The data come from the RNA Mapping Database (RMDB), library OK3TST. Structure probing data (DMS and 2A3) for a 207-nucleotide construct. The reactions ran in a buffer of 150 mM KOAc, 10 mM MgCl2 and 150 mM bicine (pH 8.5), at 24 C. The 2A3 profile rests on 2,309 reads. 2A3 adducts were read by reverse transcription with SuperScript II with manganese. For DMS, 5,560 sequencing reads were counted.
RNA sequence: GGGAACGACUCGAGUAGAGUCGAAAAGGCGAUCGAGAGGCCCUCUCAUUAAUGCGGAGGUGUCACGCUGACAGAAUGAUAUUAGAUGUCCGCUUCCGGCUGCAUCGCGGCGAUGAUUACAUAGGACAUCGAUUACCCAUUAGCUUCGGGGAAGCAAACGCCUAUUAUACUUCGGUAUAAUAGGCGUAAAAGAAACAACAACAACAAC
Reactivity to DMS in 0.01 (KOAc 150mM, MgCl2 10mM, bicine 150mM(pH8.5), 24C), signal-to-noise 3, nucleotides 027 to 156: g020g000c000g000a090u000c030g000a100g010a110g030g020c010c000c000u000c040u010c010a190u000u000a110a170u010g000c130g010g030a070g010g010u000g030u000c010a080c080g030c030u000g000a190c050a110g020a110a070u000g020a090u010a070u000u000a120g030a050u020g000u000c020c000g020c080u000u020c040c000g040g010c010u000g020c010a130u000c150g030c040g030g020c020g040a060u000g010a050u000u000a070c140a170u000a100g010g020a030c010a070u000c020g010a090u010u010a080c010c010c010a170u010u010a160g010c060u010u000c060g020g030g010g040a110a110g010c060a100a160
Reactivity to 2A3 in 0.01 (KOAc 150mM, MgCl2 10mM, bicine 150mM(pH8.5), 24C), signal-to-noise 5, nucleotides 027 to 156: g040g010c010g010a080u070c130g030a090g040a090g150g000c000c020c000u000c010u010c010a160u140u300a220a090u170g030c080g010g000a010g010g050u170g030u050c040a010c030g020c040u040g010a030c030a030g160a100a080u150g060a080u080a120u190u130a050g010a010u000g000u000c000c020g020c020u090u020c050c040g120g000c010u000g000c030a160u170c160g020c030g010g030c030g020a060u100g000a010u080u280a050c040a070u130a150g000g030a000c000a000u000c000g000a000u000u080a030c010c010c000a030u100u140a040g020c000u080u050c050g080g000g010g040a000a000g020c030a110a050